[RMDB]
RNA sequence: GGGAACGACUCGAGUAGAGUCGAAAACUUGCGAGUCUGUAGGAGAGCAUGGAGAUGAGGUGUACCAUCCUGGUGUAGUUCGACAGAAGCAACAGCAUAGAUAGGACUCCAAGUAGAAAUGAGGUCCUCGUUCUGAUCGUUUCGACGAUCAGAACGAAAAAGAAACAACAACAACAAC
Reactivity to DMS in 0.01 (KOAc 150mM, MgCl2 10mM, bicine 150mM(pH8.5), 24C), signal-to-noise 2, nucleotides 027 to 126: c070u000u030g000c050g000a080g000u000c020u000g010u010a100g000g000a030g010a190g010c040a020u030g010g000a120g000a010u000g000a100g050g000u010g010u000a110c050c060a040u040c010c080u030g000g000u000g000u000a030g000u030u030c060g000a070c100a020g010a170a010g020c000a020a110c120a060g000c120a100u030a030g000a120u060a120g000g030a030c030u000c070c010a070a080g000u000a060g000a000a060a170u050g030a100g020g010u000c010c010
Reactivity to 2A3 in 0.01 (KOAc 150mM, MgCl2 10mM, bicine 150mM(pH8.5), 24C), signal-to-noise 3, nucleotides 027 to 126: c040u040u010g030c130g010a000g070u010c010u090g080u050a000g010g190a080g000a030g100c040a030u110g060g000a090g040a110u120g020a030g180g110u060g030u030a110c010c010a040u050c030c020u050g030g030u020g010u110a100g050u010u060c050g030a070c060a090g050a000a020g010c000a010a060c000a030g050c000a000u110a060g070a040u040a050g050g030a000c010u020c010c000a070a030g030u020a000g120a070a090a140u190g000a030g040g060u070c000c000
Structure probing data (DMS and 2A3) for a 177-nucleotide construct. Source: RMDB library OK1LIB, as collected in RNAgym. Values cover nucleotides 27 to 126. For DMS, 2,252 sequencing reads were counted. For DMS the reverse transcriptase was MarathonRT. For 2A3, 1,487 sequencing reads were counted.